Chemical mapping of a 177-nucleotide RNA with 2A3. For 2A3 the reverse transcriptase was SuperScript II with manganese. Reactivities are rounded to 0.1 and cut off at 0 and 3. The RNA was probed in 150 mM KOAc, 10 mM MgCl2 and 150 mM bicine (pH 8.5) at 24 C.
[RMDB]
RNA sequence: GGGAACGACUCGAGUAGAGUCGAAAAGCUAGGUACGGUGCUUGCCAACGAAGAGGUGACCGCCGACGGCCGCAGCGACCGGGGCAAUUUUCCGGUGUUCCGGAAGCGGUUGCGGCAAUGGAUGAUGCCCAUUCAAGCCGUUCGCGGCUUGAAUGGGAAAAGAAACAACAACAACAAC
Reactivity to 2A3 in 0.01 (KOAc 150mM, MgCl2 10mM, bicine 150mM(pH8.5), 24C), signal-to-noise 1, nucleotides 027 to 126: g040c040u010a010g050g100u040a090c000g000g000u020g000c000u000u010g050c010c000a000a090c090g160a020a130g080a020g020g000u030g000a000c010c020g000c000c010g020a010c060g100g000c010c010g000c000a040g050c000g040a010c000c000g000g000g010g000c000a020a060u150u000u140u000c040c000g070g010u060g040u000u080c020c000g000g000a130a050g300c020g040g000u020u030g040c000g040g020c000a000a050u000g010g060a000u060g010a040u180g070